[RMDB]
RNA sequence: GGGAACGACUCGAGUAGAGUCGAAAAAUUGUCCAAACCAUCAGUUCUAUGUAGCUCAAUUUGACAAUCAUGUGGUUUUAGGUUUGGGUAGGCCUACAGGAGUUGUAUAUCCGGAAGAAAUACCAAGUUGUGCAAACAUUUAUGCUGUGGGUUUUGCCAUGCAAUCUGCAUUCGUGCAGAUUGCAUGAAAAGAAACAACAACAACAAC
Reactivity to DMS in 0.01 (KOAc 150mM, MgCl2 10mM, bicine 150mM(pH8.5), 24C), signal-to-noise 1, nucleotides 027 to 156: a090u010u000g010u000c040c050a030a120a070c040c030a170u000c050a080g010u000u000c070u000a090u000g010u000a110g020c010u000c020a070a080u000u000u010g010a070c060a050a070u000c040a110u000g020u000g000g040u000u000u010u000a080g020g020u000u000u000g090g030g030u000a090g000g000c000c010u020a040c050a050g010g010a090g030u000u000g050u000a140u000a040u000c020c020g000g000a060a130g000a070a030a100u010a060c030c010a070a110g000u000u000g020u000g020c070a090a040a070c080a140u020u000u000a090u010g010c000u000g030u000g000g040g000u010u000u000u010g040c160
Reactivity to 2A3 in 0.01 (KOAc 150mM, MgCl2 10mM, bicine 150mM(pH8.5), 24C), signal-to-noise 2, nucleotides 027 to 156: a000u110u070g020u000c030c000a030a020a000c010c000a020u160c070a050g070u210u070c030u170a060u070g040u050a030g050c070u020c080a120a190u100u080u200g020a050c040a040a070u050c030a040u090g030u040g060g100u030u040u030u140a060g000g010u010u070u040g030g000g010u020a030g030g000c010c000u000a010c030a020g060g110a010g080u040u030g090u080a110u030a030u060c020c050g090g020a090a070g090a050a190a030u190a070c040c080a070a020g010u060u020g020u020g030c010a050a110a030c020a160u030u150u160a120u190g030c050u010g010u110g000g070g000u030u010u110u080g010c000
Description
An RNA of 207 nucleotides, treated with DMS and 2A3 and read out base by base. 2A3 adducts were read by reverse transcription with SuperScript II with manganese. For DMS, 2,575 sequencing reads were counted. Conditions: 150 mM KOAc, 10 mM MgCl2 and 150 mM bicine (pH 8.5), 24 C.